[RMDB]
RNA sequence: GGGAACGACUCGAGUAGAGUCGAAAAUCCUCGUCCUCCCCGGUCAGCCUCCAGAGUUCCUCUUCUUCUUCCUUGCUGAGGCUCUUUCCCCCUGCGGAGAGCUGCUUCUUCUUGUUCUCGAGGGCCUAGACCAUCCACUUCGGUGGAUGGAAAAGAAACAACAACAACAAC
Reactivity to DMS in 0.01 (KOAc 150mM, MgCl2 10mM, bicine 150mM(pH8.5), 24C), signal-to-noise 5, nucleotides 027 to 129: u000c010c010u020c070g010u000c050c030u040c000c050c000c000g000g000u030c090a110g010c050c040u020c020c040a070g030a160g030u000u000c000c000u030c050u000u000c000u000u000c040u030u020c030c000u000u010g020c000u010g000a050g020g060c030u000c020u000u000u000c000c020c000c070c080u040g030c110g050g020a060g000a080g000c080u000g030c080u020u020c050u000u030c030u000u000g010u000u050c040u020c040g030a110g000g010g010c090c010u000a000g020a280
Reactivity to 2A3 in 0.01 (KOAc 150mM, MgCl2 10mM, bicine 150mM(pH8.5), 24C), signal-to-noise 7, nucleotides 027 to 129: u010c000c000u010c010g080u020c000c010u010c000c010c000c010g010g010u060c020a030g010c000c010u020c020c000a030g020a020g080u060u050c010c010u020c000u050u000c000u060u010c000u050u050c020c010u030u070g010c040u070g040a030g000g030c010u010c000u040u060u040c000c000c000c000c030u090g080c080g030g010a030g000a020g020c030u020g020c000u050u040c000u050u010c000u050u080g050u070u020c010u010c000g020a050g020g010g010c000c000u040a030g020a030